[RMDB]
RNA sequence: GGGAACGACUCGAGUAGAGUCGAAAACGAGUGCAAUAAAGACGCGGUUGCCGAUCGGUAUGGAUGCCACCGUGACGGCUCAAUCACUCAAGUGCCAACGAUAACGAGGCGCUCGCUAUUGCUGCGUAAAAGCGACGAUCGUUCGCGAUCGUCGCAAGGACGUAAAUCAGUUCGCUGAUUUACGUCCAAAAGAAACAACAACAACAAC
Reactivity to 2A3 in 0.01 (KOAc 150mM, MgCl2 10mM, bicine 150mM(pH8.5), 24C), signal-to-noise 2, nucleotides 027 to 156: c120g000a000g030u080g030c080a150a230u110a150a210a030g120a090c030g000c040g000g010u050u080g030c020c020g070a080u030c020g050g070u090a060u130g120g050a090u050g020c010c000a000c010c010g000u020g090a140c040g000g020c000u010c090a050a060u070c010a020c010u020c030a000a040g000u010g000c020c000a100a050c120g070a180u120a260a040c070g000a080g020g000c000g000c040u060c030g030c000u020a070u120u200g010c060u050g000c000g010u030a000a030a110a070g020c000g000a000c000g000a000u000c000g020u090u070c170g000c000g080a000u000c000g000u000c000g000c000a010a010